[RMDB]
RNA sequence: GGGAACGACUCGAGUAGAGUCGAAAAGAGGGGAGUGAAAUAGUACCUGAAACCAUGUGCCUACAAUCCGUCAAAGCCUCCUCGUGGGGUGAUGGCGUGCCUUUUGAAGAAUGAGCCUGCGAGUCAGGAGGCUCUCAUAAUUCGUUAUGAGAGCCUCAAAAGAAACAACAACAACAAC
Reactivity to 2A3 in 0.01 (KOAc 150mM, MgCl2 10mM, bicine 150mM(pH8.5), 24C), signal-to-noise 1, nucleotides 027 to 126: g080a010g020g010g020g010a090g020u050g000a000a060a150u060a060g080u050a070c000c040u000g010a020a010a020c010c040a010u030g090u100g060c040c000u010a070c030a040a100u030c030c010g030u020c010a040a040a000g030c000c020u070c000c040u190c070g000u300g000g000g000g000u010g000a040u040g040g000c010g030u000g070c000c020u000u040u120u080g070a100a070g010a060a030u110g020a030g020c010c010u070g000c050g020a010g040u040c010a030g000
Reactivity to DMS in 0.01 (KOAc 150mM, MgCl2 10mM, bicine 150mM(pH8.5), 24C), signal-to-noise 2, nucleotides 027 to 126: g000a120g000g010g010g010a080g030u010g000a040a110a140u010a100g010u010a070c060c020u010g000a130a130a070c070c020a050u010g030u000g000c030c020u000a060c160a060a100u010c110c020g000u000c010a010a070a300g020c010c000u000c010c010u000c220g010u000g020g010g000g000u010g000a170u000g000g010c020g000u010g010c090c040u010u000u000u020g010a060a050g000a070a080u000g000a060g000c030c030u000g000c030g000a100g000u030c030a060g000